Structure probing data (2A3 and DMS) for a 177-nucleotide construct. Conditions: 150 mM KOAc, 10 mM MgCl2 and 150 mM bicine (pH 8.5), 24 C. For DMS, 1,405 sequencing reads were counted. Values cover nucleotides 27 to 126.
RNA sequence: GGGAACGACUCGAGUAGAGUCGAAAAACGUACCUAUUCGUAGGUACGUGAUUAAAAGCUAGUCAUAUAAAAGGAAGACUAGCAAUAUAGUAUCCUAUAUUAAUAGCACAUGUUUCGACAUGUGCAAAGACUCAUUCAGUUUCGACUGAAUGAGUCUAAAAGAAACAACAACAACAAC
Reactivity to 2A3 in 0.01 (KOAc 150mM, MgCl2 10mM, bicine 150mM(pH8.5), 24C), signal-to-noise 2, nucleotides 027 to 126: a000c000g020u000a000c010c000u020a030u040u080c180g060u010a030g000g000u000a000c000g000u010g000a000u020u100a040a010a030a030g020c000u010a000g000u010c010a050u110a020u070a260a200a040a030g130g040a120a110g020a000c000u000a000g000c000a000a010u020a000u020a020g060u020a080u030c010c020u020a050u010a040u250u300a150a180u080a130g010c000a000c000a000u020g020u010u090u040c090g050a000c000a000u000g000u000g000c000a000a000
Reactivity to DMS in 0.01 (KOAc 150mM, MgCl2 10mM, bicine 150mM(pH8.5), 24C), signal-to-noise 2, nucleotides 027 to 126: a020c010g000u000a000c010c000u000a000u000u020c190g030u000a000g010g010u010a000c000g000u000g010a060u000u000a030a200a120a150g000c000u000a000g010u000c010a040u040a270u000a120a040a120a090g010g000a100a180g000a030c000u010a000g000c000a020a030u000a070u010a070g010u000a140u000c020c000u000a050u000a120u020u010a070a110u010a150g010c000a000c000a010u000g000u000u000u020c240g000a020c000a010u000g000u010g000c010a010a020